[RMDB]
RNA sequence: GGGAACGACUCGAGUAGAGUCGAAAAGCCGACUGCACGUGCGUGCGAGCAGUUUUCGAAAUCGCACGUUUCACGUAAAGACCCAUCUCUACUCGAUGCGAGGGUCAGCAAGCAAGCAGCAAUAAAACAUUCACUCAGGAUUCGUCCUGAGUGAAUGAAAAGAAACAACAACAACAAC
Reactivity to 2A3 in 0.01 (KOAc 150mM, MgCl2 10mM, bicine 150mM(pH8.5), 24C), signal-to-noise 3, nucleotides 027 to 126: g070c030c010g070a100c030u040g010c030a010c020g020u010g000c000g000u000g000c010g000a070g030c110a090g040u040u020u150u290c030g060a080a090a100u000c000g000c020a000c000g000u000u050u080c010a000c010g000u020a010a070a070g010a010c010c000c010a170u040c030u000c000u030a070c020u020c040g060a040u120g030c010g030a060g000g000g010u010c000a000g000c030a060a030g010c010a020a060g000c020a020g000c050a070a070u130a130a080a020a030
Reactivity to DMS in 0.01 (KOAc 150mM, MgCl2 10mM, bicine 150mM(pH8.5), 24C), signal-to-noise 4, nucleotides 027 to 126: g040c070c060g010a130c050u000g000c170a050c010g010u000g030c000g010u000g000c010g000a010g010c140a160g010u010u020u010u000c160g020a050a150a110u000c000g010c000a020c010g000u000u010u010c020a010c040g010u010a040a140a090g010a100c020c030c020a100u010c000u000c000u000a010c010u000c010g000a060u000g010c050g000a090g010g010g010u010c050a070g010c030a060a080g020c050a060a050g030c030a040g020c100a100a080u000a050a080a110a180
An RNA of 177 nucleotides, treated with 2A3 and DMS and read out base by base. Conditions: 150 mM KOAc, 10 mM MgCl2 and 150 mM bicine (pH 8.5), 24 C. It was measured as part of the RMDB library M2PK90.